[RMDB]
RNA sequence: GGGAACGACUCGAGUAGAGUCGAAAACGUUAAACACCAGCUUAAUCCAUAAAACAUAAACUACAAGAGAAGAAAGCUCCUUUUGAGAUCAGUAUGGAAGCGUUCUUCCUCGAUUUCAUGUAAAACGAGCUGAUUACGGAUUCGUCCGUAAUCAGCUAAAAGAAACAACAACAACAAC
Reactivity to DMS in 0.01 (KOAc 150mM, MgCl2 10mM, bicine 150mM(pH8.5), 24C), signal-to-noise 1, nucleotides 027 to 126: c030g000u000u090a050a030a130c130a170c080c050a110g000c040u000u000a120a050u080c000c000a070u050a150a120a100a040c160a020u000a120a090a020c000u000a070c110a000a050g000a050g000a020a000g030a040a000a070g000c100u000c030c000u000u090u000u020g040a070g030a100u000c000a170g010u070a100u010g000g000a030a010g030c200g000u000u000c100u000u000c000c030u000c080g000a130u000u000u010c050a040u000g000u000a000a000a040a040c130g000
Reactivity to 2A3 in 0.01 (KOAc 150mM, MgCl2 10mM, bicine 150mM(pH8.5), 24C), signal-to-noise 3, nucleotides 027 to 126: c020g010u020u130a000a160a000c020a040c020c010a030g050c030u070u160a030a060u180c080c010a070u170a070a150a060a050c010a040u150a050a080a040c010u110a110c020a210a000g110a020g000a120a040g030a030a070a000g010c000u010c000c020u150u120u150u190g180a240g060a080u270c070a020g080u150a080u210g040g000a140a060g000c000g080u020u030c000u030u000c020c000u060c020g090a000u000u030u070c110a120u070g060u180a100a010a000a020c050g000